[RMDB]
RNA sequence: GGGAACGACUCGAGUAGAGUCGAAAAGAUAUGGAAGGUACGCGAGGACUUGGAUUUAUGGCUCCCCACCAGUAGUUUCGGAAACGAAACUACUGAGGCCAUUGUCAGUCCUCACCUUCCUAAGUCACCUACUACCAAUGUUCGCAUUGGUAGUAGGAAAAGAAACAACAACAACAAC
Reactivity to 2A3 in 0.01 (KOAc 150mM, MgCl2 10mM, bicine 150mM(pH8.5), 24C), signal-to-noise 4, nucleotides 027 to 126: g000a030u050a010u090g000g000a010a020g070g010u190a060c300g080c190g300a010g000g000a020c060u300u300g300g020a060u290u300u150a010u090g020g000c000u110c010c040c000c030a020c000c000a020g010u010a000g000u010u000u000c020g000g000a020a050a030c000g000a000a000a000c000u010a000c020u000g000a010g000g020c000c000a000u020u020g010u030c090a080g010u000c000c000u000c010a000c010c000u000u030c000c000u010a040a020g040u020c020a050
Reactivity to DMS in 0.01 (KOAc 150mM, MgCl2 10mM, bicine 150mM(pH8.5), 24C), signal-to-noise 2, nucleotides 027 to 126: g010a010u010a300u000g010g000a040a010g000g000u010a110c300g040c300g020a010g010g000a040c020u000u020g000g010a070u000u000u020a020u010g010g010c020u000c110c020c000c060a300c070c000a000g000u000a010g000u000u010u000c000g000g010a080a070a100c000g000a020a000a000c020u000a000c000u000g000a030g040g010c000c000a000u000u010g000u000c000a080g000u000c000c000u000c000a020c010c000u010u000c010c010u020a020a100g000u000c010a300
Source information: An RNA of 177 nucleotides, treated with 2A3 and DMS and read out base by base. For DMS the reverse transcriptase was MarathonRT. Values cover nucleotides 27 to 126. Source: RMDB library TTRINS, as collected in RNAgym. The RNA was probed in 150 mM KOAc, 10 mM MgCl2 and 150 mM bicine (pH 8.5) at 24 C. 2A3 adducts were read by reverse transcription with SuperScript II with manganese. The DMS profile rests on 1,989 reads.